Overview:
Conditions: 150 mM KOAc, 10 mM MgCl2 and 150 mM bicine (pH 8.5), 24 C. Chemical mapping of a 207-nucleotide RNA with 2A3 and DMS. For DMS, 2,797 sequencing reads were counted. The data come from the RNA Mapping Database (RMDB), library OK3TST.

[RMDB]
RNA sequence: GGGAACGACUCGAGUAGAGUCGAAAAUCGGCCUGGGCACAUCCAACAUGCAGGGCUGGGGAUGGAGGCUGUGGGACCGAGCCAGGUCUGGGUGGGAGUUCCUGAGAUAAGUGGGUCUCACAUUUGCACAGCCACGCAAAGGCCCUCCCGGGGCUCACUACCCUAUUAGUUUCGACUAAUAGGGUAGAAAAGAAACAACAACAACAAC
Reactivity to 2A3 in 0.01 (KOAc 150mM, MgCl2 10mM, bicine 150mM(pH8.5), 24C), signal-to-noise 4, nucleotides 027 to 156: u100c030g000g010c020c020u030g000g100g040c030a040c010a110u080c050c040a100a060c030a120u110g030c050a080g030g030g050c060u050g030g000g020g020a060u100g010g020a060g020g020c050u030g010u030g010g030g010a000c000c030g050a050g140c050c070a040g010g030u020c020u050g080g020g040u120g000g060g030a030g030u110u120c010c010u040g030a060g010a130u180a170a060g080u160g040g040g020u010c010u040c000a030c000a010u100u120u150g020c050a020c000a030g010c020c010a030c040g000c020a030a050a080g040g000c000c010c000u030c010c010c000g020g010g010g000c040u030c040a020
Reactivity to DMS in 0.01 (KOAc 150mM, MgCl2 10mM, bicine 150mM(pH8.5), 24C), signal-to-noise 1, nucleotides 027 to 156: u010c030g000g010c010c020u010g010g040g030c070a080c050a090u010c060c070a120a120c050a120u000g000c050a180g010g030g040c030u050g030g000g030g020a170u000g020g010a200g000g040c030u000g000u010g000g040g020a040c030c000g010a170g030c080c080a120g040g010u000c010u010g050g000g000u010g030g000g020a080g010u000u010c050c010u000g010a120g000a100u010a030a120g010u000g010g030g000u000c000u010c020a040c020a110u000u000u000g070c040a070c030a110g020c010c010a110c100g000c030a040a060a070g010g000c000c000c010u000c030c040c030g010g000g020g030c020u010c070a160